This 207-nucleotide RNA was probed chemically with 2A3. The RNA was probed in 150 mM KOAc, 10 mM MgCl2 and 150 mM bicine (pH 8.5) at 24 C. It was measured as part of the RMDB library M2RFOK. Values cover nucleotides 27 to 156. For 2A3, 484 sequencing reads were counted.
[RMDB]
RNA sequence: GGGAACGACUCGAGUAGAGUCGAAAAGAUCUAAACAGAUGGAGAUACACAAAUGUUUGAAUCCCAGUAACAAAAAUCCUGGUAUCUCGGGUAUACAGUAGUGCAGAUACUGUAUUUUUAAUGCUCCUUAGGUUUUCCAUCUUCGGAUGGAAAACAACAUAACGGAUGGCUUCGGCCAUCCGUUAUGAAAAGAAACAACAACAACAAC
Reactivity to 2A3 in 0.01 (KOAc 150mM, MgCl2 10mM, bicine 150mM(pH8.5), 24C), signal-to-noise 1, nucleotides 027 to 156: g010a040u020c010u100a000a020a000c020a010g060a020u090g020g000a000g000a000u030a010c010a000c000a000a160a120u030g020u030u020u120g040a100a080u020c020c000c000a000g090u120a090a060c130a210a080a000a000a020u000c000c000u010g000g000u000a000u020c050u010c000g030g000g000u000a000u000a000c000a000g000u030a000g050u100g240c090a000g070a210u000a000c000u000g000u000a010u000u010u000u020u050a260a200u120g010c040u070c110c040u080u080a010g070g040u000u000u000u000c010c000a020u000c000u050u020c200g090g000a000u000g000g000a000a000a000a010c000a000a000